RNA sequence: GGGAACGACUCGAGUAGAGUCGAAAAGCAGUUGGCCCAAGCCACCGUCACCUGGAAUCCGAAUACCAACCAGUUCACCUUGGUCGGCGCUACCAUCGGCACCGGCGUUCUGGCCGUGGCGAAAUCGGCCUCAUUGACUUUUCGAAGUCAAUGAGGCAAAAGAAACAACAACAACAAC
Reactivity to 2A3 in 0.01 (KOAc 150mM, MgCl2 10mM, bicine 150mM(pH8.5), 24C), signal-to-noise 1, nucleotides 027 to 126: g030c060a050g070u160u130g030g010c010c000c010a030a030g020c000c000a010c030c050g030u030c000a030c040c030u010g050g070a030a060u080c040c070g130a060a020u100a130c020c000a000a060c030c010a020g000u030u080c050a050c070c000u050u050g010g000u030c020g020g040c010g020c020u080a080c000c090a100u090c060g010g030c040a030c000c020g000g010c010g000u080u020c040u040g000g000c000c030g050u050g020g000c040g020a070a020a030u180c090g060
Reactivity to DMS in 0.01 (KOAc 150mM, MgCl2 10mM, bicine 150mM(pH8.5), 24C), signal-to-noise 2, nucleotides 027 to 126: g030c070a030g020u010u010g030g030c040c020c050a120a220g020c030c020a040c060c130g000u000c040a050c040c020u000g000g040a090a060u010c060c070g020a110a120u000a140c070c050a070a040c080c040a060g000u000u010c110a090c140c040u020u010g010g040u000c030g030g020c040g030c020u000a050c020c020a020u000c040g000g030c060a100c050c040g000g000c020g020u010u010c050u020g010g020c020c030g030u000g010g040c040g010a040a080a060u000c100g020

The record gives the reactivity of an RNA of 177 nucleotides to 2A3 and DMS. For DMS the reverse transcriptase was MarathonRT. The DMS profile rests on 1,371 reads. Reactivities are given for positions 27 through 126. The RNA was probed in 150 mM KOAc, 10 mM MgCl2 and 150 mM bicine (pH 8.5) at 24 C.